[RMDB]
RNA sequence: GGGAACGACUCGAGUAGAGUCGAAAAGAUAUGGAAAGAACUACAGCGGUCGUGACGUUGAAAUAACACCGUAGAUCGGAAACGAUCUACGGUGUUAUGGAGUCAUCAACGCUGCUUUCCUAAGUCAGAAUAGUUGAAAGUUCGCUUUCAACUAUUCAAAAGAAACAACAACAACAAC
Reactivity to DMS in 0.01 (KOAc 150mM, MgCl2 10mM, bicine 150mM(pH8.5), 24C), signal-to-noise 5, nucleotides 027 to 126: g010a070u020a300u000g010g010a010a020a020g010a120a070c110u030a300c020a020g010c010g010g010u010c300g030u010g010a000c000g010u000u020g010a160a140a020u000a000a010c000a010c000c000g000u000a000g010a000u000c010g000g000a140a070a220c000g010a000u000c000u000a000c000g010g000u000g000u000u000a000u000g000g000a100g010u000c000a000u010c080a250a260c010g020c000u000g000c010u000u000u000c000c010u000a050a150g000u010c070a160
Reactivity to 2A3 in 0.01 (KOAc 150mM, MgCl2 10mM, bicine 150mM(pH8.5), 24C), signal-to-noise 1, nucleotides 027 to 126: g010a030u070a040u180g010g010a040a040a060g000a120a090c180u300a150c300a020g020c040g070g000u220c030g000u010g030a010c000g210u300u110g040a010a020a000u020a010a010c000a000c000c000g000u020a000g000a000u020c060g000g070a120a050a000c000g020a010u010c010u030a010c040g000g000u000g000u000u000a000u000g000g000a000g000u020c000a000u070c030a070a010c000g000c050u000g000c020u030u020u000c000c000u000a210a040g040u040c010a060

Notes: Conditions: 150 mM KOAc, 10 mM MgCl2 and 150 mM bicine (pH 8.5), 24 C. Structure probing data (DMS and 2A3) for a 177-nucleotide construct.